[RMDB]
RNA sequence: GGGAACGACUCGAGUAGAGUCGAAAAGAUAUGGAUUCAAGAGUCACAUAGGCUGAUGACCUACGUAACAUCUCGUCGGAAACGACGAGUGGUAGCAAGGCCGAAUGUGACUCUUGAAUCCUAAGUCGUUUAGAACCAUCUUCGGAUGGUUCUAAACAAAAGAAACAACAACAACAAC
Reactivity to DMS in 0.01 (KOAc 150mM, MgCl2 10mM, bicine 150mM(pH8.5), 24C), signal-to-noise 2, nucleotides 027 to 126: g000a040u000a300u010g000g020a010u010u000c000a010a000g020a020g010u000c000a000c010a000u000a300g010g000c020u000g010a110u040g010a160c300c000u000a010c030g000u010a060a090c180a040u000c000u000c010g000u000c000g000g010a090a080a260c020g020a010c020g000a000g050u010g000g000u000a000g040c060a060a150g010g010c020c000g000a120a110u000g000u010g000a010c000u000c000u010u000g000a000a000u000c000c010u000a000a110g010u000c080